[RMDB]
RNA sequence: GGGAACGACUCGAGUAGAGUCGAAAACAAUGUCAUCACGACCGUGGGUAGACGCGUCUUCAAGGGAGCCCAAUCGUUGCGGAGUCUUCAGCUGGACAAUAACCAAAUCACCUGCCUGGAUGAGCACAGCACAUCUAACUUUCGAGUUAGAUGUGCUAAAAGAAACAACAACAACAAC
Reactivity to 2A3 in 0.01 (KOAc 150mM, MgCl2 10mM, bicine 150mM(pH8.5), 24C), signal-to-noise 2, nucleotides 027 to 126: c010a010a130u090g030u080c030a010u030c010a000c080g080a080c030c040g050u070g000g010g090u050a030g040a080c040g010c030g070u010c050u100u030c060a110a080g090g010g000a040g010c000c030c000a010a060u080c070g020u030u070g080c060g040g030a050g040u000c040u040u030c070a030g030c020u050g000g030a010c040a080a100u090a060a060c030c020a060a040a020u080c050a030c020c020u020g020c020c020u060g040g030a080u080g030a000g040c030a040c030
Reactivity to DMS in 0.01 (KOAc 150mM, MgCl2 10mM, bicine 150mM(pH8.5), 24C), signal-to-noise 3, nucleotides 027 to 126: c100a110a100u020g000u000c030a050u010c080a050c090g020a110c030c090g050u030g010g000g020u000a030g000a070c100g000c040g000u000c030u020u000c080a080a080g000g000g010a090g030c030c010c040a090a100u000c100g000u000u000g010c080g020g000a080g030u000c020u000u000c070a020g050c050u000g000g000a090c080a040a040u000a040a170c100c070a080a070a050u020c080a040c070c030u000g010c040c050u000g030g000a070u000g000a110g020c170a050c230